[RMDB]
RNA sequence: GGGAACGACUCGAGUAGAGUCGAAAAGGCCAUGCGAUACCACGGGCCAUUGAAAUUCAGGCUCGGCGGUUUUCAUUUCAGGCGAGGGGACCGACGGAUCGUUCGUUACUCCAUGAGUGGCGAGCGGGAGAAAACAGAGAUUCGUCUCUGUUUUCUCAAAAGAAACAACAACAACAAC
Reactivity to 2A3 in 0.01 (KOAc 150mM, MgCl2 10mM, bicine 150mM(pH8.5), 24C), signal-to-noise 9, nucleotides 027 to 126: g070g010c010c010a040u080g030c060g040a030u030a090c000c010a010c020g010g000g000c000c020a020u050u140g110a080a110a110u230u170c100a050g000g010c010u000c000g030g000c100g010g000u080u010u040u070c030a040u030u080u160c060a020g030g020c020g020a060g010g020g000g020a030c020c030g030a040c040g050g030a070u080c000g010u000u000c000g000u000u010a010c000u000c080c110a140u300g010a000g000u010g000g010c000g000a000g000c010g000g050
Reactivity to DMS in 0.01 (KOAc 150mM, MgCl2 10mM, bicine 150mM(pH8.5), 24C), signal-to-noise 6, nucleotides 027 to 126: g010g020c020c020a090u000g010c260g000a050u010a030c020c020a050c020g010g000g020c000c020a100u040u010g010a080a090a130u040u000c150a150g000g000c010u000c000g000g030c120g000g010u000u020u000u020c020a080u020u020u020c100a080g010g010c030g010a090g000g000g010g010a100c050c040g000a090c140g000g000a080u050c000g010u010u000c000g010u000u000a000c000u000c010c200a180u040g000a010g010u000g000g000c000g000a000g010c010g000g000